RNA sequence: GGGAACGACUCGAGUAGAGUCGAAAACAUUUCAUCCAUAGAAACAAUUAUUAAGUUGAGUGACCCAACGGUUAUUGAAAUGCGUAAAGCACUACGUAGUGCUUUACGAGAAGUUAAAGAUGCCAAAAAUGAACUAGGAGUUCGCUCCUAGUUCAUUAAAAGAAACAACAACAACAAC
Reactivity to 2A3 in 0.01 (KOAc 150mM, MgCl2 10mM, bicine 150mM(pH8.5), 24C), signal-to-noise 4, nucleotides 027 to 126: c020a050u210u160u040c030a060u040c020c040a070u070a180g170a080a090a020c040a050a050u120u180a040u140u220a300a110g050u000u010g030a050g040u120g100a180c000c010c020a030a010c120g040g000u170u190a040u080u090g040a110a010a000u090g010c010g000u000a000a010a000g010c000a000c000u140a050c220g280u230a030g000u000g010c000u000u000u000a000c000g000a000g010a000a010g010u020u080a010a070a050g060a040u080g060c030c000a080a090a030
Reactivity to DMS in 0.01 (KOAc 150mM, MgCl2 10mM, bicine 150mM(pH8.5), 24C), signal-to-noise 4, nucleotides 027 to 126: c030a070u000u020u010c010a050u020c030c060a090u030a100g010a150a130a150c140a070a100u010u030a120u030u020a080a160g000u010u000g020a090g020u000g000a190c020c010c020a030a080c160g000g000u010u000a040u010u010g020a050a070a030u060g000c000g010u000a000a000a000g020c000a000c000u010a180c300g000u020a020g020u000g000c000u000u000u000a010c000g000a040g000a020a130g010u010u010a100a060a110g000a060u010g020c020c060a020a080a050